The data come from the RNA Mapping Database (RMDB), libraries RFM100 and RFMREP.
Chemical mapping of a 177-nucleotide RNA with 2A3 and DMS.
The 2A3 profile rests on 1,735 reads.
Reactivities are given for positions 27 through 126.
[RMDB]
RNA sequence: GGGAACGACUCGAGUAGAGUCGAAAAGAUGCGGCGGCGUGAGUGGAUGCCUCCGAUGCUGAUGACGAGGCGGCUGUUGCGCUGGCCGCUGCUGUACUUGCUGACGUUGCUGCAUUUGUCUCAGAUGCAAAGUACGGUGGUUCGCCACCGUACUUUGAAAAGAAACAACAACAACAAC
Reactivity to 2A3 in 0.01 (KOAc 150mM, MgCl2 10mM, bicine 150mM(pH8.5), 24C), signal-to-noise 3, nucleotides 027 to 126: g040a000u060g000c010g000g000c000g000g000c010g020u030g070a010g020u110g090g060a060u080g000c000c000u140c030c060g060a070u080g000c090u130g040a300u090g040a050c030g020a020g020g010c000g020g000c030u020g040u170u100g060c080g010c080u080g120g030c000c000g020c000u030g010c030u010g020u080a090c010u040u080g000c010u030g040a010c010g000u000u000g000c000u010g000c000a080u040u010u150g030u020c000u000c050a040g020a050u090g020
Reactivity to DMS in 0.01 (KOAc 150mM, MgCl2 10mM, bicine 150mM(pH8.5), 24C), signal-to-noise 3, nucleotides 027 to 126: g030a060u010g000c020g000g000c020g000g020c030g020u000g000a030g030u060g000g040a110u040g020c010c000u010c000c050g010a110u010g010c160u050g000a090u000g010a300c300g000a080g000g050c000g000g020c010u000g000u000u020g010c040g030c040u000g000g040c030c020g000c000u020g020c040u010g010u020a100c040u040u000g000c070u010g000a050c050g020u030u000g000c050u000g000c070a040u000u000u020g020u010c030u010c040a100g000a120u010g000

High 2A3 reactivity points to a flexible backbone, as in loops and unpaired stretches.